[RMDB]
RNA sequence: GGGAACGACUCGAGUAGAGUCGAAAAUCAUCUAUGUUCGCAUAGAUGAACACAGCCUUGUAGUUUUAGUGGACUUUAGGCUAAUGAAUUUCACUAGAAAAAUAAUCGGGUGUUUCGACACCCGAAACAACCAAAGAAGAUUCGUCUUCUUUGGUUGAAAAGAAACAACAACAACAAC
Reactivity to 2A3 in 0.01 (KOAc 150mM, MgCl2 10mM, bicine 150mM(pH8.5), 24C), signal-to-noise 8, nucleotides 027 to 126: u010c000a000u000c000u010a000u010g030u010u050c170g010c110a000u000a010g000a000u000g000a060a010c100a000c020a020g030c000c010u060u060g150u150a070g020u040u010u030u010a020g010u020g020g010a000c010u050u050u020a020g030g020c040u060a080a170u150g090a040a130u070u190u140c010a020c010u020a030g160a060a160a040a050a060u220a070a110u030c000g000g010g000u000g010u020u100u060c090g020a010c000a000c010c000c000g000a000a000a000
Reactivity to DMS in 0.01 (KOAc 150mM, MgCl2 10mM, bicine 150mM(pH8.5), 24C), signal-to-noise 6, nucleotides 027 to 126: u000c010a000u000c000u000a010u000g020u000u020c250g030c010a010u000a010g000a010u000g010a030a120c130a080c130a130g000c010c010u000u000g000u010a030g010u000u000u000u000a010g080u010g020g010a010c020u000u000u000a020g010g010c050u010a070a100u010g010a070a090u000u010u000c000a010c020u000a030g010a030a090a080a090a080u010a070a120u000c000g010g010g020u000g010u000u000u010c170g010a050c010a010c000c000c000g000a000a020a070